[RMDB]
RNA sequence: GGGAACGACUCGAGUAGAGUCGAAAAACUUUCGCCAAGCAGAUUUAGUGCUUUGCGUAUCUUAGAUGAUAAAUAAAAUUUGCAGCUGCCUAAAUCUUCAAAGGGAACUCCACCAUAUUCCCUGAAGGGUCAUAGUGGCUUUCGAGCCACUAUGACCAAAAGAAACAACAACAACAAC
Reactivity to 2A3 in 0.01 (KOAc 150mM, MgCl2 10mM, bicine 150mM(pH8.5), 24C), signal-to-noise 2, nucleotides 027 to 126: a000c100u020u100u060c040g100c030c000a010a120g000c050a060g090a270u100u080u250a070g100u180g040c070u000u010u090g010c000g090u020a030u000c090u140u220a220g100a210u050g060a010u030a160a190a050u300a060a120a290a220u110u140u090g040c030a060g000c010u030g000c030c030u010a010a010a010u010c040u000u040c020a130a150a000g000g000g000a000a000c180u030c060c020a000c020c030a020u030a030u290u150c000c000c000u010g070a030a050g030